[RMDB]
RNA sequence: GGGAACGACUCGAGUAGAGUCGAAAAAUGACCAAGUCAAGGUCCAGGCUGGCAACAGAGCAGACAGAGCGAGGCACAUCGAUGGGUAGCGAGGAAAGUCGACUUAAAGUCGUCCAAAGGAAAUAACUGUUUUAUACACGUUCGCGUGUAUAAAACAAAAAGAAACAACAACAACAAC
Reactivity to DMS in 0.01 (KOAc 150mM, MgCl2 10mM, bicine 150mM(pH8.5), 24C), signal-to-noise 5, nucleotides 027 to 126: a050u030g010a100c020c030a090a120g040u020c080a060a100g000g010u010c020c070a100g000g000c020u000g000g000c110a080a130c120a040g010a110g000c070a080g000a100c090a070g000a100g020c070g020a110g000g010c080a070c100a080u020c110g020a080u020g000g010g030u000a050g010c070g000a090g000g000a070a070a080g010u000c000g010a020c020u010u000a130a100a090g000u010c000g010u010c010c020a060a090a080g010g020a060a050a100u030a090a070c190
Reactivity to 2A3 in 0.01 (KOAc 150mM, MgCl2 10mM, bicine 150mM(pH8.5), 24C), signal-to-noise 4, nucleotides 027 to 126: a010u150g050a050c020c010a030a030g140u060c070a080a050g040g010u020c050c030a060g050g000c010u020g000g020c010a030a090c020a070g050a010g010c010a000g040a030c000a010g050a010g040c040g020a050g030g000c030a020c010a080u040c010g120a090u080g000g040g030u040a010g000c030g020a020g020g010a110a020a010g030u000c000g000a020c000u060u100a180a050a020g010u020c010g000u000c010c000a080a040a060g100g060a060a140a010u130a020a060c040
Description: An RNA of 177 nucleotides, treated with DMS and 2A3 and read out base by base. The data come from the RNA Mapping Database (RMDB), libraries RFM100 and RFMREP. For DMS the reverse transcriptase was MarathonRT.